Structure probing data (DMS) for a 177-nucleotide construct. High DMS reactivity at an A or C suggests that its Watson-Crick edge is free.

RNA sequence: GGGAACGACUCGAGUAGAGUCGAAAAGAUAUUAACGCGCGUGGUGUGUCUAACGCGAAUUACCCAGUUAUUUUCGACUUUACUCGAGUCGUUAUAGCGUGAUAUGACACAGUUAUCCGCGAACGAAUGUAGGGUAUUCUUUCGAGAAUACCCUACAAAAAGAAACAACAACAACAAC
Reactivity to DMS in 0.01 (KOAc 150mM, MgCl2 10mM, bicine 150mM(pH8.5), 24C), signal-to-noise 2, nucleotides 027 to 126: g010a180u010a060u000u010a030a030c300g000c030g000c010g030u000g000g030u010g000u000g010u000c010u000a160a000c010g020c010g000a040a070u000u000a060c120c030c100a090g010u000u000a060u000u000u000u000c000g000a030c000u000u000u000a000c010u000c000g020a000g010u010c000g000u010u000a000u010a160g020c010g010u010g000a030u000a100u010g000a080c010a030c040a110g000u010u000a040u000c020c000g000c000g000a090a160c110g000a090a070